This 177-nucleotide RNA was probed chemically with 2A3 and DMS. For DMS the reverse transcriptase was MarathonRT. The reactions ran in a buffer of 150 mM KOAc, 10 mM MgCl2 and 150 mM bicine (pH 8.5), at 24 C.

[RMDB]
RNA sequence: GGGAACGACUCGAGUAGAGUCGAAAACAAACAAACAAGGGUCCGAAACCAUCUAAGGUGAUAAAGAUGGAAUAUACGCUGUAAAAAUAAGCGUAGAAUCACCGACGGACCCACAAGAUCGGAUAAACCCAUGCUAUCAUUUCGAUGAUAGCAUGGGAAAAGAAACAACAACAACAAC
Reactivity to 2A3 in 0.01 (KOAc 150mM, MgCl2 10mM, bicine 150mM(pH8.5), 24C), signal-to-noise 4, nucleotides 027 to 126: c030a000a030a030c030a000a160a010c060a120a170g000g020g010u010c000c010g000a050a000a030c050c000a100u050c060u200a130a170g040g000u060g070a130u110a140a150a010g100a060u160g010g130a060a000u110a000u000a030c000g000c000u050g100u300a050a000a000a190a040u190a080a000g000c000g000u000a030g000a000a010u020c010a000c070c000g010a020c050g000g000a000c000c000c030a000c000a000a000g000a000u120c080g080g000a070u140a060a140a010
Reactivity to DMS in 0.01 (KOAc 150mM, MgCl2 10mM, bicine 150mM(pH8.5), 24C), signal-to-noise 4, nucleotides 027 to 126: c040a060a110a090c210a090a090a170c300a090a100g010g020g020u010c000c000g000a120a130a120c040c010a020u020c020u000a100a090g030g010u020g000a140u020a130a130a120g020a040u020g010g000a250a070u020a120u000a000c000g000c000u000g040u030a020a030a080a080a140u040a040a040g000c000g000u000a000g000a090a100u010c020a000c030c020g010a220c030g000g000a030c000c000c000a010c130a070a040g000a050u020c100g000g000a080u030a040a040a140
2A3 adducts were read by reverse transcription with SuperScript II with manganese.